[RMDB]
RNA sequence: GGGAACGACUCGAGUAGAGUCGAAAAUGCGCGUUCGACGCGGCAUCGGCUGUUCGGCUGAAUGGACGCCCGCCUGAAGAACGUCCGCACGAUUUGCCGAUUCGUGCUCAUCGCGCCGUCGACGGCAAAAUGGAUACGCAUUCGUGCGUAUCCAUUUAAAAGAAACAACAACAACAAC
Reactivity to DMS in 0.01 (KOAc 150mM, MgCl2 10mM, bicine 150mM(pH8.5), 24C), signal-to-noise 5, nucleotides 027 to 126: u010g010c050g020c010g010u000u000c050g030a060c050g000c040g010g020c200a040u000c040g000g010c000u000g010u010u000c030g000g000c140u010g000a070a100u000g010g010a040c010g010c100c020c070g000c120c090u010g010a110a120g000a060a080c020g010u000c020c030g000c050a080c030g000a050u000u000u010g000c010c010g000a100u000u000c020g000u010g000c110u000c050a060u010c020g010c020g020c020c090g010u010c080g020a120c070g010g000c120a060
Reactivity to 2A3 in 0.01 (KOAc 150mM, MgCl2 10mM, bicine 150mM(pH8.5), 24C), signal-to-noise 3, nucleotides 027 to 126: u060g000c040g000c000g020u030u080c090g020a000c030g010c000g030g010c050a030u020c010g020g000c010u050g060u130u020c020g080g000c100u130g120a150a150u180g010g010a010c000g040c020c040c030g110c050c060u150g080a070a050g040a100a020c010g000u020c000c010g010c000a100c010g010a010u100u050u140g000c000c000g010a030u020u000c020g000u020g050c090u010c020a070u040c020g010c010g000c010c010g060u090c040g030a120c030g010g050c060a010
Source information: An RNA of 177 nucleotides, treated with DMS and 2A3 and read out base by base. The reactions ran in a buffer of 150 mM KOAc, 10 mM MgCl2 and 150 mM bicine (pH 8.5), at 24 C. The DMS profile rests on 6,917 reads. For 2A3, 5,341 sequencing reads were counted.